RNA sequence: GGGAACGACUCGAGUAGAGUCGAAAAACGCGCAAAGAACCCCAAACAGCCGAAGAAAAUUCCCGAGCGCAGCAAGGAAGCCUCGCGCACGGGACGCGGCACGUCCAUGGGCGGCGCGGCUUCCGUACGAUGAUACUAAUUUCGAUUAGUAUCAUCGAAAAGAAACAACAACAACAAC
Reactivity to DMS in 0.01 (KOAc 150mM, MgCl2 10mM, bicine 150mM(pH8.5), 24C), signal-to-noise 7, nucleotides 027 to 126: a080c100g020c020g020c020a120a090a140g020a130a220c050c010c010c040a110a140a110c080a110g010c020c030g010a110a080g000a070a080a110a150u000u000c000c000c010g000a120g020c020g030c010a100g020c190a110a130g010g000a050a030g000c030c020u000c060g010c010g000c010a040c020g000g000g010a010c060g000c060g010g020c090a180c060g000u000c010c020a090u000g020g000g010c030g020g020c000g040c080g000g000c020u000u000c000c000g010u010a060
Reactivity to 2A3 in 0.01 (KOAc 150mM, MgCl2 10mM, bicine 150mM(pH8.5), 24C), signal-to-noise 5, nucleotides 027 to 126: a000c040g080c000g000c010a080a300a180g090a220a290c050c010c000c010a020a180a030c020a030g000c020c050g040a110a080g130a110a260a040a040u060u020c010c000c000g010a030g000c020g000c010a040g030c040a090a070g090g110a070a020g010c010c020u100c080g000c010g000c010a010c010g000g020g000a000c000g000c010g070g000c050a020c060g010u000c020c030a110u070g000g040g010c040g050g050c000g000c010g000g010c000u010u000c000c000g000u010a010
The record gives the reactivity of an RNA of 177 nucleotides to DMS and 2A3. It was measured as part of the RMDB library OK2TST. The 2A3 profile rests on 9,138 reads.